Structure probing data (2A3 and DMS) for a 177-nucleotide construct. Reactivities are given for positions 27 through 126. The RNA was probed in 150 mM KOAc, 10 mM MgCl2 and 150 mM bicine (pH 8.5) at 24 C.
RNA sequence: GGGAACGACUCGAGUAGAGUCGAAAAUGCGGAAAGCCAGCAAUUAAAUUAUUCAAUGGUGCCAUCAUAAAGAUCAAAGAGUCACCUAUAGUCUUAGGACUACCAUCUUGCAAUAGGAGUAGAAUAGCAUACUAGGCGUAUUCGUACGCCUAGUAUGAAAAGAAACAACAACAACAAC
Reactivity to 2A3 in 0.01 (KOAc 150mM, MgCl2 10mM, bicine 150mM(pH8.5), 24C), signal-to-noise 4, nucleotides 027 to 126: u140g000c040g080g050a220a100a070g040c030c040a020g000c060a020a030u180u250a190a120a040u220u120a100u080u150c050a040a080u050g010g000u020g020c010c020a070u050c010a020u140a170a130a050g060a060u070c070a050a090a020g060a020g040u060c010a010c030c010u040a070u040a120g020u000c030u050u040a090g150g000a010c000u020a040c010c020a060u060c040u030u050g060c040a060a110u060a160g010g040a040g050u060a020g050a110a100u110a130g050
Reactivity to DMS in 0.01 (KOAc 150mM, MgCl2 10mM, bicine 150mM(pH8.5), 24C), signal-to-noise 6, nucleotides 027 to 126: u000g010c110g010g000a070a080a120g010c030c030a070g010c060a100a090u010u010a050a060a100u010u000a050u010u000c070a070a060u010g010g010u000g010c040c040a040u010c070a040u010a070a070a110g000a050u010c080a050a080a130g000a060g010u000c030a070c030c030u000a080u000a040g020u000c020u000u000a090g000g000a050c030u010a030c120c060a090u000c030u000u000g000c100a050a070u010a060g010g010a050g010u000a060g000a050a080u010a080g010